[RMDB]
RNA sequence: GGGAACGACUCGAGUAGAGUCGAAAAGGCAGUGCUGCGGCCUCGUGUGGGAUCGCGUCAGGACUGAAGGAGAGCGAAUCCCGGGGCUCGGUGUGGAGAAGGAGGUGCCAAGUAGCCCCGUUGCGGAGCGUAAAGAUCCUUUCGAGGAUCUUUACGCAAAAGAAACAACAACAACAAC
Reactivity to 2A3 in 0.01 (KOAc 150mM, MgCl2 10mM, bicine 150mM(pH8.5), 24C), signal-to-noise 6, nucleotides 027 to 126: g050g010c030a020g030u060g070c000u020g020c020g000g050c010c010u020c020g110u170g030u180g050g010g030a030u040c020g000c010g130u080c030a040g060g100a060c040u100g070a080a050g100g050a060g010a010g010c040g010a060a110u030c000c000c000g000g000g010g000c020u020c030g010g000u070g020u070g030g080a120g030a100a040g050g020a030g020g010u040g000c000c010a040a020g010u030a010g010c000c000c000c020g000u020u040g020c070g030g040a060
Reactivity to DMS in 0.01 (KOAc 150mM, MgCl2 10mM, bicine 150mM(pH8.5), 24C), signal-to-noise 3, nucleotides 027 to 126: g000g020c070a050g000u020g020c020u000g020c100g000g000c020c020u000c090g030u010g050u010g000g000g020a060u000c040g040c050g000u020c110a080g000g000a130c110u020g010a150a080g010g020a100g040a110g010c010g000a050a070u000c010c010c000g000g010g000g010c010u010c050g000g000u030g000u010g010g000a080g010a090a060g000g000a060g010g020u010g000c010c030a070a120g010u010a080g000c020c000c010c030g000u000u000g000c070g000g020a180

An RNA of 177 nucleotides, treated with 2A3 and DMS and read out base by base. It was measured as part of the RMDB libraries RFM100 and RFMREP. 2A3 adducts were read by reverse transcription with SuperScript II with manganese. The RNA was probed in 150 mM KOAc, 10 mM MgCl2 and 150 mM bicine (pH 8.5) at 24 C.